[RMDB]
RNA sequence: GGGAACGACUCGAGUAGAGUCGAAAACAUCAUUCUGGCUGAGGGCAGCUUUGACGGCAGCAUGUUCAGUGGCGUUCCAUUGCUACGCGCUGGCUUUAACUCAUUAAUAGAUUGUGCCAAGGUGUCCGGAAGUUCUGCUGAGGGGCUACUCAAAAACGCCCUUAUAUGCAUUCGUGCAUAUAAGGGCAAAAGAAACAACAACAACAAC
Reactivity to DMS in 0.01 (KOAc 150mM, MgCl2 10mM, bicine 150mM(pH8.5), 24C), signal-to-noise 1, nucleotides 027 to 156: c060a090u000c080a150u000u010c050u000g040g020c050u000g010a150g030g000g000c030a050g000c110u010u000u000g010a070c060g020g000c020a070g020c110a070u000g030u020u010c030a030g000u010g030g060c100g030u010u000c020c070a220u000u000g000c050u010a060c000g030c020g060c020u030g000g020c030u000u000u000a090a130c040u000c040a100u000u000a100a130u010a100g000a190u020u020g020u010g000c020c030a110a090g050g000u000g010u000c030c020g060g080a070a020g010u000u000c030u010g000c070u010g020a190g090g010g060g050c110u000a040c030u000c020a050a090a080a110a060c190
Reactivity to 2A3 in 0.01 (KOAc 150mM, MgCl2 10mM, bicine 150mM(pH8.5), 24C), signal-to-noise 3, nucleotides 027 to 156: c030a040u070c020a030u130u030c040u060g090g000c010u010g040a090g030g050g040c040a030g030c020u050u040u080g100a080c050g010g050c010a020g030c010a060u090g030u100u070c030a020g010u050g160g000c020g030u080u100c070c040a120u080u170g040c030u030a030c030g000c030g000c030u030g020g020c040u070u080u080a060a020c040u030c060a080u030u220a090a070u050a140g060a080u080u160g050u030g030c000c030a030a020g040g010u030g000u020c000c010g000g000a030a000g030u060u040c070u130g060c030u040g010a020g000g020g000g000c010u050a050c040u050c080a040a020a060a010a050c060

Background: An RNA of 207 nucleotides, treated with DMS and 2A3 and read out base by base. DMS adducts were read by reverse transcription with MarathonRT. The 2A3 profile rests on 1,551 reads. It was measured as part of the RMDB library OK3TST. For 2A3 the reverse transcriptase was SuperScript II with manganese. High 2A3 reactivity points to a flexible backbone, as in loops and unpaired stretches.